[RMDB]
RNA sequence: GGGAACGACUCGAGUAGAGUCGAAAAGAAAGAAAGUACUGAAAGUAUUGUGGGAGAUAAUGUGUAAAUCAUUGACCGUUCCUGCGCUGGUAAGAAUAAAAUUUUAGUCCAGACACCACCAGUAUAACCAAUCUAGUGACCUUCGGGUCACUAGAAACCUCAACUGCAUGUUCGCAUGCAGUUGAGGAAAAGAAACAACAACAACAAC
Reactivity to 2A3 in 0.01 (KOAc 150mM, MgCl2 10mM, bicine 150mM(pH8.5), 24C), signal-to-noise 1, nucleotides 027 to 156: g040a040a100a000g040a100a160a030g020u000a000c000u010g070a070a080a040g180u250a100u260u070g000u000g000g020g020a030g000a020u030a030a030u020g000u010g030u030a000a020a040u040c000a070u010u010g030a020c070c000g050u150u080c060c020u000g010c030g000c010u070g000g020u040a010a030g020a090a040u130a260a170a120a140u140u080u060u060a030g010u000c010c010a000g010a000c000a020c020c000a000c000c000a000g050u040a010u020a110a000c120c050a020a040u010c000u000a000g000u000g000a010c010c000u000u030c100g040g020g040u040c000a000c000u000a000g000a000a000a000
Source: RMDB library M2RFPK, as collected in RNAgym. Chemical mapping of a 207-nucleotide RNA with 2A3. For 2A3 the reverse transcriptase was SuperScript II with manganese. The 2A3 profile rests on 458 reads.